[RMDB]
Structure probing data (2A3 and DMS) for a 177-nucleotide construct. The data come from the RNA Mapping Database (RMDB), libraries RFM100 and RFMREP.
RNA sequence: GGGAACGACUCGAGUAGAGUCGAAAACGGUUGUGCGUUUAAAUGGGUGUGGUGCUAAGUAUAUCUUGUUUACCUUAUCUUUCUUUGGAAAACGUUUUGAAGUCUGGUUGGAUUUGUCACAUCAUGCUUCUGCCAUUUAUUUCGAUAAAUGGCAGAAAAAAGAAACAACAACAACAAC
Reactivity to 2A3 in 0.01 (KOAc 150mM, MgCl2 10mM, bicine 150mM(pH8.5), 24C), signal-to-noise 2, nucleotides 027 to 126: c000g010g070u000u050g060u030g040c020g020u020u030u080a070a120a060u090g040g000g000u000g000u040g090g040u060g000c010u010a000a110g040u000a050u010a040u200c080u110u120g010u070u080u150a050c030c000u000u040a120u100c070u040u110u030c000u020u040u030g030g020a000a070a020a060c020g060u060u000u000u080g040a010a000g080u000c010u050g000g000u040u030g000g010a070u000u000u210g000u070c070a030c000a140u040c000a020u110g060c040
Reactivity to DMS in 0.01 (KOAc 150mM, MgCl2 10mM, bicine 150mM(pH8.5), 24C), signal-to-noise 3, nucleotides 027 to 126: c060g000g020u000u000g000u000g010c110g010u000u000u010a030a070a120u010g000g010g030u010g010u010g010g020u010g000c060u010a050a070g010u010a060u010a070u010c060u010u000g000u000u010u000a090c050c040u020u010a060u020c050u000u020u010c030u010u010u000g010g000a050a100a100a140c090g020u010u000u010u000g000a060a060g000u000c050u010g000g000u000u000g000g010a140u000u010u000g000u010c040a050c150a070u020c030a040u000g000c230
Background: Conditions: 150 mM KOAc, 10 mM MgCl2 and 150 mM bicine (pH 8.5), 24 C.